Chemical mapping of a 177-nucleotide RNA with DMS and 2A3.
The data come from the RNA Mapping Database (RMDB), libraries RFM100 and RFMREP.
The reactions ran in a buffer of 150 mM KOAc, 10 mM MgCl2 and 150 mM bicine (pH 8.5), at 24 C.
For 2A3 the reverse transcriptase was SuperScript II with manganese.

[RMDB]
RNA sequence: GGGAACGACUCGAGUAGAGUCGAAAAUUUAUGAGGUAAAGCAAAUGAUUAGAGGGCUUGGGAAUGUAAUGUUCUUAACCUAUUCUCAAACUUUAAAUAUGUAAGACGUACUUGUUUCUUAAUUGAAAAUUAAUAUGUCAUUCGUGACAUAUUAAUUAAAAGAAACAACAACAACAAC
Reactivity to DMS in 0.01 (KOAc 150mM, MgCl2 10mM, bicine 150mM(pH8.5), 24C), signal-to-noise 6, nucleotides 027 to 126: u000u000u010a030u000g010a300g000g000u010a020a020a030g010c020a060a110a080u000g000a050u000u010a060g010a160g000g000g010c300u000u010g000g000g000a040a000u000g000u010a100a090u010g000u000u000c020u000u010a040a060c020c010u000a020u010u000c010u000c010a080a080a060c040u020u010u010a040a040a090u020a080u010g010u020a040a060g010a120c110g000u010a050c210u010u000g000u000u000u000c010u020u020a060a110u020u010g000a100a050
Reactivity to 2A3 in 0.01 (KOAc 150mM, MgCl2 10mM, bicine 150mM(pH8.5), 24C), signal-to-noise 4, nucleotides 027 to 126: u130u160u060a140u110g060a000g070g030u090a030a010a030g020c020a010a020a130u070g030a060u070u080a090g010a060g030g040g060c070u060u050g020g000g020a010a010u020g010u230a050a140u250g020u090u000c040u010u010a030a010c000c000u000a030u110u010c030u000c000a030a040a020c010u070u110u120a050a130a110u230a070u200g100u110a100a010g040a030c040g000u060a030c070u030u010g030u020u020u000c030u040u100a190a240u130u120g060a150a090
Source information:
Values are in units of 0.01, from 0 to 300, in steps of 10. Values cover nucleotides 27 to 126.